[RMDB]
RNA sequence: GGGAACGACUCGAGUAGAGUCGAAAACUCAUAAUAUAGCUCAAGUGAGUACGUGCACGAUGAAUAACACACUAAUCAACGUGCAUCAAUUCGGGCAGAUUUUGGAGUACAAUCCACCAAAGCCCGAUAAGGUACACAAAACAACUAUAGUGUACCACCCAUCCGAUGAGUUCGCUCAUCGGAUGGGAAAAGAAACAACAACAACAAC
Reactivity to 2A3 in 0.01 (KOAc 150mM, MgCl2 10mM, bicine 150mM(pH8.5), 24C), signal-to-noise 2, nucleotides 027 to 156: c010u010c000a000u080a200a100u180a030u120a100g040c050u100c110a280a150g070u110g150a010g000u070a140c130g000u010g000c000a000c020g030a010u020g010a030a090u220a230a020c220a000c020a040c180u160a130a050u020c010a010a040c000g010u010g040c000a010u060c060a000a040u080u020c000g000g000g020c000a020g050a250u010u120u070u100g000g000a000g050u080a080c170a120a110u010c040c010a000c010c040a180a040a080g000c010c040c000g000a000u000a040a050g000g000u000a000c010a000c010a010a090a210a050c070a070a030c070u130a070u080a240g000u010g010u000a000c000c010a010